[RMDB]
An RNA of 207 nucleotides, treated with 2A3 and DMS and read out base by base. Reactivities are given for positions 27 through 156. For 2A3, 3,290 sequencing reads were counted. The reactions ran in a buffer of 150 mM KOAc, 10 mM MgCl2 and 150 mM bicine (pH 8.5), at 24 C.
RNA sequence: GGGAACGACUCGAGUAGAGUCGAAAAACGAGUGAGUUACGACUCACUCGACUUUUAAUGCUACCCAAAGGUCGUGCCAAGUCGAUAAAACGCAGAGUCAAAAAGUCCGACGUUACGACGUCGGACAACGAGCGAGUUCUGUUCGCAGAACUCGCAACUCACUCCUAUAGUUCGCUAUAGGAGUGAGAAAAGAAACAACAACAACAAC
Reactivity to 2A3 in 0.01 (KOAc 150mM, MgCl2 10mM, bicine 150mM(pH8.5), 24C), signal-to-noise 4, nucleotides 027 to 156: a000c020g000a010g000u020g000a000g010u030u080a130c240g050a020c070u000c000a000c000u000c000g000a000c010u040u080u030u110a160a090u140g040c040u050a040c000c000c020a050a090a020g040g010u020c020g000u020g070c030c020a050a010g060u040c020g020a070u070a190a080a020a000c030g020c070a010g040a020g180u150c110a080a040a030a080a030g000u000c000c000g000a000c010g010u020u030a060c260g030a010c000g070u000c000g020g000a000c000a000a000c010g020a030g000c000g000a000g000u000u000c010u010g040u050u100c210g010c060a000g010a000a010c010u000c000g000c000a000a000
Reactivity to DMS in 0.01 (KOAc 150mM, MgCl2 10mM, bicine 150mM(pH8.5), 24C), signal-to-noise 1, nucleotides 027 to 156: a160c010g010a050g040u010g010a050g030u030u010a120c260g010a110c000u000c000a000c000u000c000g020a030c060u000u040u000u000a000a090u040g000c030u010a050c010c010c030a050a140a120g050g020u000c020g020u010g000c020c020a030a300g030u000c040g000a040u010a060a040a130a100c050g000c000a160g030a150g030u010c110a090a050a130a080a150g000u000c000c010g000a050c000g020u000u000a150c260g020a080c030g020u000c010g000g040a010c000a000a010c100g000a140g020c010g000a050g000u010u010c000u000g010u000u000c280g060c010a040g000a030a000c000u000c000g000c010a000a010